[RMDB]
Description: Structure probing data (DMS and 2A3) for a 177-nucleotide construct. It was measured as part of the RMDB library TTRDES. 2A3 adducts were read by reverse transcription with SuperScript II with manganese.

RNA sequence: GGGAACGACUCGAGUAGAGUCGAAAAGAUAUGGAUGAUUGGUGAGGUGAUGACCUAGGUCGGAAACGACCUAGCAAGCCUACCACUGUCAUCCUAAGUCAAACAAUUCAGGUUCGCCUGAAUUGAAGACAAGCUCCAUGUUCGCAUGGAGCUUGUCAAAAGAAACAACAACAACAAC
Reactivity to DMS in 0.01 (KOAc 150mM, MgCl2 10mM, bicine 150mM(pH8.5), 24C), signal-to-noise 1, nucleotides 027 to 126: g030a100u000a300u010g000g000a000u000g010a020u000u010g010g030u020g030a080g000g000u010g000a030u010g000a160c300c000u000a000g000g040u000c000g000g000a160a110a270c000g050a000c000c020u000a000g000c110a020a150g000c000c000u000a140c190c000a030c300u000g000u010c000a010u000c000c000u000a000a210g000u020c010a140a110a270c010a000a000u000u000c000a000g000g030u020u000c300g010c000c000u000g000a000a000u000u000g030a140a130
Reactivity to 2A3 in 0.01 (KOAc 150mM, MgCl2 10mM, bicine 150mM(pH8.5), 24C), signal-to-noise 1, nucleotides 027 to 126: g060a030u110a060u170g000g010a000u010g020a020u050u300g020g060u040g110a060g010g010u060g130a300u180g020a060c010c000u000a000g000g030u010c020g000g000a000a020a110c040g000a000c000c020u000a000g000c040a020a100g000c000c020u110a150c000c030a020c020u050g030u010c000a000u020c000c000u020a170a000g080u000c060a140a050a000c000a010a000u020u010c000a020g030g180u050u170c250g130c060c030u000g000a020a030u000u020g000a040a000